[RMDB]
RNA sequence: GGGAACGACUCGAGUAGAGUCGAAAAGGAAACAAAAGUGUUCUUAGGAGUCCUGCUGUCACUGUGGAUUGAGCCGGUGAAGCCCUGAGGGAUUUCAUCGCUGAGGUGGAUGGAGAAGCAGCUGGGGCGCUUAAAGUACAUUCGUGUACUUUAAGCGAAAAGAAACAACAACAACAAC
Reactivity to 2A3 in 0.01 (KOAc 150mM, MgCl2 10mM, bicine 150mM(pH8.5), 24C), signal-to-noise 9, nucleotides 027 to 126: g050g010a050a050a010c060a030a130a090a050g100u120g050u100u030c020u060u080a070g070g050a050g040u030c010c000u030g020c010u030g040u090c030a020c090u060g030u090g110g040a100u050u170g060a030g050c050c020g010g000u010g010a020a010g000c020c000c010u090g060a260g010g040g020a030u020u030u020c010a020u020c020g000c060u050g020a050g060g050u080g040g040a080u070g050g010a070g010a090a010g010c010a000g000c020u050g000g000g010g000
Reactivity to DMS in 0.01 (KOAc 150mM, MgCl2 10mM, bicine 150mM(pH8.5), 24C), signal-to-noise 8, nucleotides 027 to 126: g010g000a080a070a060c080a060a060a220a090g010u010g010u000u000c010u000u010a120g010g010a130g010u000c020c020u000g000c030u010g010u010c040a070c040u010g020u010g000g010a120u010u020g010a090g010c130c040g020g000u000g000a040a040g000c010c000c010u010g020a170g020g010g010a060u000u000u000c020a010u000c020g010c040u010g010a100g010g010u000g000g010a070u000g000g010a080g000a080a100g010c040a020g010c040u010g000g000g000g010

Chemical mapping of a 177-nucleotide RNA with 2A3 and DMS. It was measured as part of the RMDB libraries RFM100 and RFMREP. The RNA was probed in 150 mM KOAc, 10 mM MgCl2 and 150 mM bicine (pH 8.5) at 24 C. DMS adducts were read by reverse transcription with MarathonRT. For 2A3 the reverse transcriptase was SuperScript II with manganese.